[RMDB]
RNA sequence: GGGAACGACUCGAGUAGAGUCGAAAAACGUGCGAAAGCACGGUCAGCUCGUGAGGAUAUACAACACUGCUUCGGAAGUGUAUUAAGAUCACAUGAGGAUCACCCAUGUAGAAGGCACGAGCUGAUACGUAUUAGCAUAGUUCGCUAUGCUAAUACGAAAAGAAACAACAACAACAAC
Reactivity to 2A3 in 0.01 (KOAc 150mM, MgCl2 10mM, bicine 150mM(pH8.5), 24C), signal-to-noise 9, nucleotides 027 to 126: a000c010g000u010g000c010g060a150a010a010g000c000a000c000g000g010u000c000a000g000c000u000c010g000u000g000a030g030g060a070u040a010u010a090c030a040a010c000a010c020u060g030c030u100u100c090g130g070a040a010g010u010g030u030a090u090u170a110a060g020a040u020c020a010c040a170u170g060a190g160g010a030u060c020a110c040c020c000a010u060g010u010a030g010a120a020g080g000c000a000c000g000a000g010c000u000g000a000u000a010
Reactivity to DMS in 0.01 (KOAc 150mM, MgCl2 10mM, bicine 150mM(pH8.5), 24C), signal-to-noise 9, nucleotides 027 to 126: a090c010g040u000g000c000g010a140a090a190g010c000a010c000g000g000u000c000a010g000c000u000c000g020u000g010a030g000g000a100u000a100u000a030c090a080a110c010a010c000u000g000c060u000u010c210g020g010a060a010g010u000g000u000a070u000u000a100a100g000a030u000c020a040c050a090u000g010a110g010g000a070u000c110a170c040c030c020a100u000g010u000a040g010a110a240g000g000c000a010c000g000a010g010c000u000g000a010u000a030
Structure probing data (2A3 and DMS) for a 177-nucleotide construct. For 2A3, 45,337 sequencing reads were counted. The RNA was probed in 150 mM KOAc, 10 mM MgCl2 and 150 mM bicine (pH 8.5) at 24 C. For DMS the reverse transcriptase was MarathonRT. For 2A3 the reverse transcriptase was SuperScript II with manganese.